[RMDB]
RNA sequence: GGGAACGACUCGAGUAGAGUCGAAAACAUGCCCCGUCCCAUGUGGGUAGUCUCGUCCCUGUGCCCACAGCGGAGCCCGGGCAAUUCCGUCGAGCACCGCCCCACUGGUCCCUGCAGGAAAGCGCGCCCCGGGUGAUAGCUUCGGCUAUCACCCGGGAAAAGAAACAACAACAACAAC
Reactivity to 2A3 in 0.01 (KOAc 150mM, MgCl2 10mM, bicine 150mM(pH8.5), 24C), signal-to-noise 1, nucleotides 027 to 126: c020a050u100g030c000c030c000c030g080u080c000c020c010a060u050g010u030g020g030g000u040a040g090u020c010u010c160g120u020c020c040c020u070g040u050g020c000c000c000a010c000a000g010c160g050g020a000g030c020c020c000g000g000g030c040a010a040u110u030c020c050g070u040c070g010a020g030c000a020c020c000g000c000c020c010c000a050c030u020g010g020u060c030c000c000u000g070c000a010g000g120a060a070a000g100c070g000c000g030c000
The data come from the RNA Mapping Database (RMDB), library OK1LIB. An RNA of 177 nucleotides, treated with 2A3 and read out base by base. The RNA was probed in 150 mM KOAc, 10 mM MgCl2 and 150 mM bicine (pH 8.5) at 24 C.